[RMDB]
RNA sequence: GGGAACGACUCGAGUAGAGUCGAAAAAGCAACGAGUGUGUGUGGGACGUUUUAUCCCAAGCUCUGAGUAGAGCACGCGCUCACACACACCGCGAGCGAGCAUCAGCAGAGCGCAAACCCUGGUAAACCUGUUCCUCUUUUUCGAAAGAGGAACAGGAAAAGAAACAACAACAACAAC
Reactivity to DMS in 0.01 (KOAc 150mM, MgCl2 10mM, bicine 150mM(pH8.5), 24C), signal-to-noise 2, nucleotides 027 to 126: a070g010c020a160a040c030g000a130g050u000g040u000g000u000g020u000g000g010g000a080c000g000u000u010u020u010a110u000c040c040c030a090a070g020c010u010c010u010g010a200g000u020a050g000a010g020c000a150c120g020c060g000c000u000c000a000c000a010c000a000c010a010c020c010g000c050g000a120g000c010g000a140g010c070a040u000c030a090g000c050a050g010a130g010c060g020c090a060a070a080c020c010c030u000g020g000u000a030a100a090
Reactivity to 2A3 in 0.01 (KOAc 150mM, MgCl2 10mM, bicine 150mM(pH8.5), 24C), signal-to-noise 2, nucleotides 027 to 126: a000g080c020a050a040c000g050a150g040u020g010u000g000u000g010u010g040g000g040a030c010g010u050u050u100u190a190u170c000c030c030a000a010g030c000u000c000u060g300a280g200u290a000g180a010g010c020a000c040g040c010g030c000u000c000a000c010a000c000a000c010a000c000c000g020c030g000a010g050c040g000a020g030c020a050u100c000a000g130c010a000g060a020g000c060g000c040a010a040a090c030c000c030u030g040g090u150a040a020a060